[RMDB]
RNA sequence: GGGAACGACUCGAGUAGAGUCGAAAAUGCCCCUGAAUGGCUGUGGGAUCUGAGCAGUACCUGUAACUCCAUUGCCUUAGCUGCAGACUAAGGUGGUAGUGUAAUUUCAGGGAAGGGAAUAAGGUCACAUUUAUUUACUGUUCGCAGUAAAUAAAUGAAAAGAAACAACAACAACAAC
Reactivity to 2A3 in 0.01 (KOAc 150mM, MgCl2 10mM, bicine 150mM(pH8.5), 24C), signal-to-noise 9, nucleotides 027 to 126: u050g080c010c000c000c020u060g170a180a070u110g090g040c040u030g020u100g060g030g030a060u020c030u060g030a030g010c030a010g020u030a040c000c010u030g010u040a030a030c010u000c020c010a030u030u090g020c010c000u000u010a010g000c050u210g100c090a050g070a300c010u010a010a000g010g000u020g010g020u060a040g000u010g010u050a120a150u030u080u080c020a010g030g020g050a030a030g080g030g040a060a060u120a100a030g030g020u040c020a010
Reactivity to DMS in 0.01 (KOAc 150mM, MgCl2 10mM, bicine 150mM(pH8.5), 24C), signal-to-noise 9, nucleotides 027 to 126: u010g010c050c010c010c170u010g010a100a090u010g010g010c030u000g020u000g010g010g010a060u000c040u000g010a160g010c050a060g010u000a130c020c010u000g010u000a100a070c030u000c020c030a050u000u000g010c000c000u000u000a010g010c040u010g020c270a120g010a160c010u000a010a010g000g030u000g000g010u000a030g010u000g010u010a070a130u000u000u000c020a020g010g000g010a140a130g010g000g000a080a070u010a090a070g010g010u000c080a250